[RMDB]
RNA sequence: GGGAACGACUCGAGUAGAGUCGAAAACAGCCGGGAGCUUUGGCAAGACUCACGUCUCUAACAACCGAGCUCCCCAAGUGAGCAAUUCCUGUCCCUUUUAGGGGCUCAGGACUCUAAGGGGGUCCGUGUGAGAGGACCGUGAUCGAUUGAUCAAGCAAUAUAUAUGGCUAUUCGUAGCCAUAUAUAUAAAAGAAACAACAACAACAAC
Reactivity to DMS in 0.01 (KOAc 150mM, MgCl2 10mM, bicine 150mM(pH8.5), 24C), signal-to-noise 2, nucleotides 027 to 156: c030a160g020c040c060g000g000g010a060g020c010u000u000u000g070g000c000a070a100g020a060c020u000c140a120c190g010u000c000u000c050u010a140a130c050a140a080c030c000g000a030g020c000u010c000c000c000c000a010a150g020u010g000a140g020c040a090a180u000u010c010c020u000g020u000c000c000c010u030u010u000u010a110g010g010g000g010c010u010c130a030g040g010a030c010u000c010u000a110a090g030g020g020g020g040u010c000c050g050u000g020u020g000a160g000a200g010g010a070c030c030g010u000g010a020u010c030g030a220u000u000g020a050u000c050a040a050g020c050a110
Reactivity to 2A3 in 0.01 (KOAc 150mM, MgCl2 10mM, bicine 150mM(pH8.5), 24C), signal-to-noise 3, nucleotides 027 to 156: c020a030g090c030c020g020g010g030a090g000c040u130u200u240g080g020c050a040a020g010a040c030u040c060a050c040g090u010c030u020c030u150a250a080c060a030a060c020c020g030a030g000c010u090c020c000c010c000a090a020g100u100g070a030g010c070a130a210u060u070c000c000u000g010u030c000c000c010u030u170u050u300a130g000g000g010g000c010u000c010a000g000g050a020c010u010c020u110a070a040g030g000g000g010g000u040c020c020g020u060g000u020g050a110g000a040g020g030a020c040c020g040u020g010a010u030c060g110a150u050u300g010a020u050c020a000a000g030c010a070
This 207-nucleotide RNA was probed chemically with DMS and 2A3. The 2A3 profile rests on 1,255 reads. The reactions ran in a buffer of 150 mM KOAc, 10 mM MgCl2 and 150 mM bicine (pH 8.5), at 24 C.